[RMDB]
Conditions: 150 mM KOAc, 10 mM MgCl2 and 150 mM bicine (pH 8.5), 24 C. An RNA of 177 nucleotides, treated with 2A3 and DMS and read out base by base. Values cover nucleotides 27 to 126. The data come from the RNA Mapping Database (RMDB), libraries RFM100 and RFMREP. DMS adducts were read by reverse transcription with MarathonRT.
RNA sequence: GGGAACGACUCGAGUAGAGUCGAAAAGCAAUGGCCUCAGCUACAAAUAUCCCUCUCCUUGGUUCCCCUUAAUUUAAUUCGUUUUCUUUUUUUCAAAACAAUAACCAUACAAAUACCAAUCUUCCGGUUAUACCUAACUCUUCGGAGUUAGGUAUAAAAAAGAAACAACAACAACAAC
Reactivity to 2A3 in 0.01 (KOAc 150mM, MgCl2 10mM, bicine 150mM(pH8.5), 24C), signal-to-noise 5, nucleotides 027 to 126: g010c040a030a100u110g040g000c000c030u030c060a030g000c000u040a040c050a040a140a020u150a120u080c010c000c000u000c010u020c000c000u020u060g070g010u020u040c020c000c000c000u040u120a080a090u150u080u130a060a110u120u050c040g050u010u030u080u060c030u030u060u040u030u010u010u070c040a040a070a060a080c030a030a040u100a090a000c030c000a020u110a140c050a090a090a030u140a100c010c030a020a060u060c060u080u020c040c010g000g000
Reactivity to DMS in 0.01 (KOAc 150mM, MgCl2 10mM, bicine 150mM(pH8.5), 24C), signal-to-noise 5, nucleotides 027 to 126: g010c060a080a080u010g010g000c030c010u010c050a060g020c020u000a090c100a090a090a100u020a120u000c010c000c010u000c040u000c010c020u000u020g000g020u000u000c000c010c000c130u010u010a050a050u040u010u010a040a120u020u000c100g020u010u000u000u000c000u000u000u000u000u000u000u010c080a040a040a080a080c120a060a090u000a040a070c040c040a070u030a100c110a050a060a100u020a070c090c070a060a060u010c070u010u010c100c080g000g000